An RNA of 207 nucleotides, treated with 2A3 and DMS and read out base by base. The 2A3 profile rests on 10,443 reads. The DMS profile rests on 3,507 reads.

RNA sequence: GGGAACGACUCGAGUAGAGUCGAAAACGGCAUGAUACCACCGUUACCGGGUCAACAGAGUAGUUGCAAAUGACAACAAUGCUCAGGGUUAUGCUCUCGCUGCCUAAUGGCGGUGCGGGAAACCCACAAAAGAUAUUGAUCUUCGGAUCAAUAUCAACAUAGAAUUCUACUUCGGUAGAAUUCUAUGAAAAGAAACAACAACAACAAC
Reactivity to 2A3 in 0.01 (KOAc 150mM, MgCl2 10mM, bicine 150mM(pH8.5), 24C), signal-to-noise 9, nucleotides 027 to 156: c000g000g000c010a020u120g010a010u030a030c000c010a010c000c010g130u060u040a020c000c070g000g000g000u010c010a020a020c070a070g020a010g010u080a010g010u020u030g030c060a090a290a300u290g090a150c010a030a000c000a040a170u130g000c010u030c060a060g050g000g000u050u030a110u300g070c000u000c010u010c000g000c010u010g000c000c010u240a300a140u110g000g000c010g010g030u010g000c020g010g000g000a040a010a000c030c020c020a050c020a030a090a000a010g000a000u000a000u000u000g000a000u000c000u040u080c230g090g000a000u000c000a000a000u000a000u000c000a000a000
Reactivity to DMS in 0.01 (KOAc 150mM, MgCl2 10mM, bicine 150mM(pH8.5), 24C), signal-to-noise 2, nucleotides 027 to 156: c010g000g000c020a150u010g010a160u010a030c030c010a020c010c000g030u000u010a030c080c090g020g000g020u010c030a170a120c120a100g030a040g040u000a050g030u010u010g010c020a080a160a230u000g010a140c020a090a040c010a030a100u000g020c020u010c010a150g000g000g020u000u000a070u000g000c060u010c000u000c020g000c010u010g000c030c000u010a110a150u010g010g030c040g010g040u000g020c070g000g000g000a040a070a040c000c000c010a040c090a030a030a060a110g010a020u000a000u000u010g000a020u000c010u000u020c300g030g000a010u000c010a010a010u000a010u010c000a040a160

DMS adducts were read by reverse transcription with MarathonRT. Source: RMDB library M2RFPK, as collected in RNAgym.